[RMDB]
RNA sequence: GGGAACGACUCGAGUAGAGUCGAAAAUAGCAAUGUUGCCUGUUCUUUGUUAUAUUAUGGAACACUAUGACCUCUAUAGUGUUAAUCAAUAUUUAGUAUGAGAGGCAAUCAGAGGGCGCUAUCAUGCUCGACAGCAAAGGUUCGCCUUUGCUGUCGAAAAAGAAACAACAACAACAAC
Reactivity to DMS in 0.01 (KOAc 150mM, MgCl2 10mM, bicine 150mM(pH8.5), 24C), signal-to-noise 1, nucleotides 027 to 126: u010a130g000c130a060a070u000g000u000u000g000c030c010u000g000u020u000c020u000u040u020g000u030u000a000u000a000u000u000a060u050g010g020a040a000c000a000c020u000a010u050g000a300c130c140u000c080u010a150u000a000g000u000g000u000u000a010a050u060c160a020a020u000a000u000u040u010a030g000u050a040u000g000a040g000a050g010g000c060a000a000u000c080a100g000a110g000g040g000c280g010c030u000a020u000c080a040u030g030c110
Reactivity to 2A3 in 0.01 (KOAc 150mM, MgCl2 10mM, bicine 150mM(pH8.5), 24C), signal-to-noise 1, nucleotides 027 to 126: u030a010g020c020a030a050u070g010u020u000g000c010c030u080g070u100u020c000u020u150u050g050u140u060a180u020a000u090u130a080u160g000g100a050a000c000a000c000u000a000u040g050a100c000c020u060c000u000a000u000a000g000u000g000u000u000a030a000u040c020a030a000u010a100u040u110u040a110g070u120a000u160g020a000g000a000g010g050c000a010a010u050c000a010g030a030g070g040g000c160g000c110u010a000u080c010a030u140g000c090